RNA sequence: GGGAACGACUCGAGUAGAGUCGAAAAGUACGAUUUUUCGAAAUCGUACGAAGGUCAGGUGGCAGCACCACGUCACUGGUCGCGGCGACCGAGCCGAACAGAAUAUGUGUAAUUUCGAUUACACAAAUGUGACGUUGAAGUUCGCUUCAACGUCACAAAAAGAAACAACAACAACAAC
Reactivity to DMS in 0.01 (KOAc 150mM, MgCl2 10mM, bicine 150mM(pH8.5), 24C), signal-to-noise 1, nucleotides 027 to 126: g020u000a000c010g010a020u000u010u000u000u000c200g010a040a060a000u000c000g020u000a000c000g040a060a080g000g010u000c050a190g010g000u000g000g000c000a030g020c050a070c000c000a010c160g000u020c140a120c250u000g000g000u000c120g040c020g000g000c000g010a020c040c020g000a220g000c040c000g000a080a090c190a140g000a080a070u040a060u000g000u000g000u000a000a030u000u000u000c230g000a030u000u020a020c000a000c040a040a130a040
Reactivity to 2A3 in 0.01 (KOAc 150mM, MgCl2 10mM, bicine 150mM(pH8.5), 24C), signal-to-noise 1, nucleotides 027 to 126: g000u000a010c010g000a000u010u010u000u010u080c150g050a030a010a000u010c000g000u000a000c010g010a080a020g090g000u070c070a000g040g110u050g070g030c010a000g020c000a010c020c020a010c040g130u040c110a060c140u070g010g000u010c120g000c000g070g000c020g010a000c000c000g000a030g000c000c000g030a040a000c020a000g240a160a030u290a090u130g010u000g000u000a000a010u020u080u050c160g010a000u030u010a000c030a000c000a000a040a070
Background: Chemical mapping of a 177-nucleotide RNA with DMS and 2A3. DMS adducts were read by reverse transcription with MarathonRT. The RNA was probed in 150 mM KOAc, 10 mM MgCl2 and 150 mM bicine (pH 8.5) at 24 C.